The record gives the reactivity of an RNA of 177 nucleotides to 2A3. The data come from the RNA Mapping Database (RMDB), library OK1LIB. The reactions ran in a buffer of 150 mM KOAc, 10 mM MgCl2 and 150 mM bicine (pH 8.5), at 24 C. Reactivities are given for positions 27 through 126.

RNA sequence: GGGAACGACUCGAGUAGAGUCGAAAAAGGGACCUCUCUAUGGAGGAGGAGUUGCUGAGGCUCGAAUACAAGCAACACACCGGGCGCAGCUUCGUGUAAGAGGGGGUGCGCGCACCAACUCUCCGUCCCGAUGAGCGGGUUUCGACCCGCUCAUCGGAAAAGAAACAACAACAACAAC
Reactivity to 2A3 in 0.01 (KOAc 150mM, MgCl2 10mM, bicine 150mM(pH8.5), 24C), signal-to-noise 1, nucleotides 027 to 126: a010g060g000g000a020c060c000u040c020u000c040u040a120u180g060g050a070g070g070a080g000g000a220g040u000u040g050c050u000g010a180g080g120c060u040c300g040a050a050u120a180c160a180a000g080c000a220a000c120a000c040a000c010c010g000g050g000c000g000c040a120g000c000u050u050c060g300u050g060u210a110a000g020a060g140g000g000g000g000u000g000c090g000c030g000c110a050c030c040a000a120c020u000c000u010c020c000g130u140c010